[RMDB]
RNA sequence: GGGAACGACUCGAGUAGAGUCGAAAAUAUGGGCAGUUCGCUGCCCAUACGACCGGAGUCCGGCACUAUGAGCCCGCAGCGUUGGUGCGUAGCCGCGGUGCAGAGACCAAGCCUUCGGGCUUGGUAAUCACGAAAUUAAUUUCGAUUAAUUUCGUGAAAAAGAAACAACAACAACAAC
Reactivity to 2A3 in 0.01 (KOAc 150mM, MgCl2 10mM, bicine 150mM(pH8.5), 24C), signal-to-noise 5, nucleotides 027 to 126: u080a000u000g000g000g000c010a010g010u030u060c160g060c110u010g000c000c010c000a000u000a000c000g030a030c000c020g040g020a080g120u040c050c020g020g020c060a010c070u140a100u210g050a040g040c000c020c030g010c010a050g050c040g060u250u300g050g020u070g010c070g090u120a010g000c010c000g020c010g030g040u030g000c010a030g040a010g020a130c000c000a010a000g000c000c000u030u070c220g070g000g000c000u000u000g010g000u000a000a020
Reactivity to DMS in 0.01 (KOAc 150mM, MgCl2 10mM, bicine 150mM(pH8.5), 24C), signal-to-noise 7, nucleotides 027 to 126: u010a000u000g000g010g020c000a010g010u000u010c230g010c000u000g010c000c000c000a000u000a000c060g010a180c020c010g000g010a100g000u000c040c030g010g010c070a050c090u000a060u010g010a140g010c010c040c030g000c040a040g010c030g010u000u010g040g010u000g010c170g010u010a180g000c010c020g000c080g000g010u000g010c020a110g010a130g000a040c000c000a010a010g000c010c000u000u010c210g030g000g010c000u000u000g000g010u000a020a060